[RMDB]
This 177-nucleotide RNA was probed chemically with DMS and 2A3. 2A3 adducts were read by reverse transcription with SuperScript II with manganese. Values cover nucleotides 27 to 126. DMS adducts were read by reverse transcription with MarathonRT. Conditions: 150 mM KOAc, 10 mM MgCl2 and 150 mM bicine (pH 8.5), 24 C.

RNA sequence: GGGAACGACUCGAGUAGAGUCGAAAAAGGAUGUUAGCUGGGCUUGGGGGCUCACACCUGCAGUACCAACUACUUGGGAGGCUGAGGCGGGAAGACUGCUUGAGCUCAGGAGUUUGAGACCAGCCUGCCAGUCCUUAGAAUUCGUUCUAAGGACUGGAAAAGAAACAACAACAACAAC
Reactivity to DMS in 0.01 (KOAc 150mM, MgCl2 10mM, bicine 150mM(pH8.5), 24C), signal-to-noise 4, nucleotides 027 to 126: a070g020g010a090u000g000u000u000a090g010c050u000g010g000g010c040u010u010g020g000g010g010g000c040u000c060a040c110a070c030c010u000g030c130a050g010u000a090c040c020a040a070c210u010a070c160u000u010g010g000g000a160g010g010c020u000g000a060g010g000c010g000g010g010a120a060g010a140c020u000g010c030u010u000g000a050g010c020u010c020a020g010g010a070g000u000u010u010g000a060g000a070c040c010a040g030c010c040u000g000
Reactivity to 2A3 in 0.01 (KOAc 150mM, MgCl2 10mM, bicine 150mM(pH8.5), 24C), signal-to-noise 2, nucleotides 027 to 126: a000g100g010a110u120g010u140u090a030g040c020u050g010g010g010c000u040u130g090g000g020g030g030c000u020c000a020c020a010c000c000u060g000c030a030g000u040a100c010c010a040a060c060u240a050c050u100u050g020g060g000a070g140g000c010u040g030a000g020g010c040g000g020g000a030a060g100a080c010u020g030c000u070u020g050a000g030c010u000c040a020g050g020a070g040u110u180u160g060a030g010a020c010c000a000g040c000c000u010g030